[RMDB]
RNA sequence: GGGAACGACUCGAGUAGAGUCGAAAAACCCAAAUGUCGACGUCAUUCGCGUUGAUGGUGUACGAGUCAAUGUUAAUGAAAACUUGCAGUACUUCGUUCUCAAUAAGCCUCGCGGGUUGCAAUCGACUAUGAGCGAUGACAUGGGGCGGCCUUGUGAGGCAAAAUUAAAUUUCGAUUUAAUUUUGCCAAAAGAAACAACAACAACAAC
Reactivity to DMS in 0.01 (KOAc 150mM, MgCl2 10mM, bicine 150mM(pH8.5), 24C), signal-to-noise 3, nucleotides 027 to 156: a060c010c000c050a090a070a100u000g020u010c020g020a030c040g010u010c040a080u000u000c050g020c030g030u000u020g020a060u000g020g020u010g010u000a070c070g010a220g010u000c030a060a080u000g010u000u000a060a070u000g000a140a070a050a070c050u010u010g010c040a100g000u010a050c050u000u000c030g020u000u000c030u000c030a110a160u000a080a140g010c010c010u000c040g050c030g020g020g020u000u010g010c030a100a080u010c020g000a080c020u000a120u000g010a070g030c040g000a130u000g020a110c040a110u000g010g020g040g050c080g010g000c030c010u000u020g020u010g010a100
Reactivity to 2A3 in 0.01 (KOAc 150mM, MgCl2 10mM, bicine 150mM(pH8.5), 24C), signal-to-noise 3, nucleotides 027 to 156: a000c050c070c000a020a100a050u180g050u040c000g010a020c020g020u080c060a110u090u030c100g010c040g040u040u080g030a080u090g040g040u110g050u080a040c040g030a050g040u020c070a060a060u120g010u030u170a110a100u210g150a080a080a040a120c030u020u040g000c030a020g030u050a050c000u050u130c040g020u040u010c030u000c000a060a160u130a250a080g010c000c010u030c010g000c050g000g040g020u000u030g000c030a040a070u040c010g040a010c010u070a130u200g070a100g020c010g060a030u080g010a050c010a100u090g000g030g000g050c000g040g040c020c030u100u180g040u000g050a070